[RMDB]
RNA sequence: GGGAACGACUCGAGUAGAGUCGAAAAACUAGUUAACCAUGUACUUGUAUGAGCGGCUAAUUCAUGAACACGUUCCGUUGGUAAAUGACGUGACCCACCACCUGUUUUAAAAUGAACUUGAGAGGUGCAUAUCCCACUCCUUCGGGAGUGGGAUAUGAAAAGAAACAACAACAACAAC
Reactivity to DMS in 0.01 (KOAc 150mM, MgCl2 10mM, bicine 150mM(pH8.5), 24C), signal-to-noise 2, nucleotides 027 to 126: a060c100u000a110g020u000u000a030a140c060c040a050u010g020u010a070c070u010u000g020u000a050u010g010a150g000c070g000g040c080u000a030a070u020u020c060a050u010g020a110a070c060a030c030g010u000u000c060c090g020u000u000g020g030u020a050a080a070u010g000a170c040g010u000g000a120c030c030c010a110c060c040a100c010c050u000g010u010u000u010u000a060a040a140a090u000g000a070a040c070u000u010g000a110g000a020g010g010u010g000
Reactivity to 2A3 in 0.01 (KOAc 150mM, MgCl2 10mM, bicine 150mM(pH8.5), 24C), signal-to-noise 1, nucleotides 027 to 126: a000c020u030a000g040u040u060a050a050c000c040a090u160g030u130a070c020u140u030g000u120a100u150g020a020g070c060g020g140c060u070a150a000u060u000c020a030u110g030a050a010c050a020c080g050u070u010c090c040g080u000u070g000g040u040a030a080a130u080g000a010c010g000u020g060a030c080c020c030a000c020c020a000c000c020u030g100u040u060u010u000a060a210a110a100u100g050a010a030c000u050u050g030a100g030a040g220g020u000g040